[RMDB]
Chemical mapping of a 177-nucleotide RNA with 2A3 and DMS. The reactions ran in a buffer of 150 mM KOAc, 10 mM MgCl2 and 150 mM bicine (pH 8.5), at 24 C. Source: RMDB library OK1LIB, as collected in RNAgym. Values cover nucleotides 27 to 126.
RNA sequence: GGGAACGACUCGAGUAGAGUCGAAAAGGCAGGAAUAGAAUGGGCCGAAUCUAGUGACUCACUGCAGGCCAGAUGCUAUUUUUGUUUGGCGCAAGGCCUGGUGGCUGAUGCGGCUGUGUUCUAAUAGCAAUAUUAUAAAUUUCGAUUUAUAAUAUUGAAAAGAAACAACAACAACAAC
Reactivity to 2A3 in 0.01 (KOAc 150mM, MgCl2 10mM, bicine 150mM(pH8.5), 24C), signal-to-noise 4, nucleotides 027 to 126: g100g010c060a010g040g060a050a060u040a030g010a010a020u020g030g000g000c000c000g000a000a000u000c030u090a020g020u030g130a050c000u030c090a010c000u100g040c040a000g000g000c010c000a020g040a040u030g000c010u010a100u050u080u010u140u170g230u130u070u110g000g000c010g000c040a050a030g000g000c000c000u010g010g000u020g000g000c000u020g000a010u050g020c000g020g010c030u060g130u030g020u250u010c020u030a070a080u020a100g010
Reactivity to DMS in 0.01 (KOAc 150mM, MgCl2 10mM, bicine 150mM(pH8.5), 24C), signal-to-noise 6, nucleotides 027 to 126: g010g010c040a050g010g010a090a060u010a020g000a040a010u010g010g000g000c010c000g010a050a040u010c030u040a010g010u010g000a080c040u060c040a040c020u020g020c040a020g020g010c000c000a040g000a130u020g000c010u000a010u010u020u030u030u030g020u020u010u010g010g010c010g010c090a160a140g000g010c000c000u000g010g020u000g010g000c020u000g010a040u000g010c030g000g010c010u000g020u020g010u000u000c010u000a040a100u010a090g000